[RMDB]
RNA sequence: GGGAACGACUCGAGUAGAGUCGAAAAGUGUUCCUCUCCUUCAUGUAGAACUUGUACAAGUCAGACCUGGAAUGGCUGAAGGGUAUUGGAUGGCUGCCAGAGGGUUCUGUGGAAGUGAUGAGAGUGAAGAAUGCCCAGAAUCUCUUGAAUGAAAGGACAGUAGUCAGCUAUUCGUAGCUGACUACUGAAAAGAAACAACAACAACAAC
Reactivity to DMS in 0.01 (KOAc 150mM, MgCl2 10mM, bicine 150mM(pH8.5), 24C), signal-to-noise 1, nucleotides 027 to 156: g030u010g000u020u000c000c000u000c030u020c010c020u000u010c020a060u020g040u000a030g010a000a110c020u000u010g030u000a080c030a060a080g000u000c050a140g010a070c030c010u040g010g010a120a110u000g020g000c070u000g000a060a060g020g020g090u000a080u000u000g030g030a150u000g030g020c070u010g000c010c060a140g040a110g000g010g010u000u000c020u000g000u000g010g010a020a120g010u000g000a100u000g000a170g020a110g010u000g020a050a130g000a080a090u000g070c040c020c000a230g000a070a100u000c020u000c020u000u000g000a070a130u010g000a030a050a080g000g000a270
Reactivity to 2A3 in 0.01 (KOAc 150mM, MgCl2 10mM, bicine 150mM(pH8.5), 24C), signal-to-noise 3, nucleotides 027 to 156: g070u070g040u020u020c000c010u020c050u010c000c020u050u080c020a080u130g010u060a010g010a110a020c000u030u090g060u120a020c040a070a050g010u020c030a020g040a170c000c030u070g010g040a080a030u070g070g000c020u010g020a020a030g080g000g010u050a110u050u150g070g010a050u050g030g030c060u040g040c020c020a100g060a080g030g020g000u040u040c020u040g010u120g050g040a060a110g020u050g090a030u070g010a030g000a000g050u090g020a050a020g060a030a070u120g020c010c000c010a010g070a010a030u030c040u000c020u080u060g060a090a040u070g050a120a090a020g030g000a020